[RMDB]
RNA sequence: GGGAACGACUCGAGUAGAGUCGAAAACGCUGGGAUCGAGAGUAGGGGAGAAGGUACUGAAGCGCGCACGGUACCCUUCGAGGAUCCGAUGGUAGAUCCUGUGCUGAAGCGCGCACGGCAACCGAAAGGUGCGUAUCCGGAUCAUUCGUGAUCCGAAUCCAACACUCAAUUUCGAUUGAGUGUUGGAAAAAGAAACAACAACAACAAC
Reactivity to 2A3 in 0.01 (KOAc 150mM, MgCl2 10mM, bicine 150mM(pH8.5), 24C), signal-to-noise 3, nucleotides 027 to 156: c060g000c020u040g000g000g000a010u010c030g010a020g000a020g120u180a090g030g000g010g010a010g040a020a020g000g020u010a010c010u040g040a210a080g030c010g000c010g030c060a020c040g000g020u030a020c060c120c020u010u010c020g080a170g020g020a010u010c030c010g040a080u050g040g050u030a020g000a000u000c010c000u000g000u010g000c030u040g060a140a020g010c010g000c010g000c030a020c030g030g010c020a050a070c000c010g070a100a050a050g000g000u040g000c000g010u040a120u070c100c020g000g010a000u000c000a040u030u180c250g130u040g000a000u010c000c000g010a020a060
Reactivity to DMS in 0.01 (KOAc 150mM, MgCl2 10mM, bicine 150mM(pH8.5), 24C), signal-to-noise 1, nucleotides 027 to 156: c000g000c040u000g020g000g030a010u000c040g000a230g040a130g020u000a240g070g000g070g000a120g000a090a040g030g000u000a050c070u000g090a070a070g010c020g040c020g050c020a300c010g000g020u000a040c120c000c100u010u030c110g000a070g030g010a070u000c010c010g000a120u010g020g000u020a190g010a010u000c020c010u000g040u010g010c000u000g000a030a010g010c010g060c000g000c000a100c020g000g020c010a100a050c060c000g010a050a060a150g020g000u000g030c040g010u010a090u000c040c000g000g010a040u000c010a080u000u000c300g070u000g070a040u000c000c000g010a000a000